The data come from the RNA Mapping Database (RMDB), library OK2TRN. Chemical mapping of a 177-nucleotide RNA with DMS. The RNA was probed in 150 mM KOAc, 10 mM MgCl2 and 150 mM bicine (pH 8.5) at 24 C.

[RMDB]
RNA sequence: GGGAACGACUCGAGUAGAGUCGAAAAGUGGACGCUGCCUGGCCAGCGGCAGGCCGCCCUGCGCGUCAGGAACGGCGCCACCCGCGCCGUACGCGCUAUCUGGCGCGCCGGCCGGCGCGCAUCGCGAACCAUUUACUCCAUUCGUGGAGUAAAUGGUAAAAGAAACAACAACAACAAC
Reactivity to DMS in 0.01 (KOAc 150mM, MgCl2 10mM, bicine 150mM(pH8.5), 24C), signal-to-noise 2, nucleotides 027 to 126: g000u010g020g030a090c150g020c030u000g020c000c040u000g030g000c020c070a150g020c050g010g020c020a040g010g030c090c030g010c160c030c010u000g000c030g030c010g030u020c090a080g000g040a130a040c040g000g000c010g060c000c120a090c170c110c050g000c050g000c020c000g020u000a060c050g000c020g000c080u010a070u000c120u000g010g000c120g050c060g000c300c300g050g000c040c060g000g020c010g000c150g030c060a020u000c120g010c070g020a130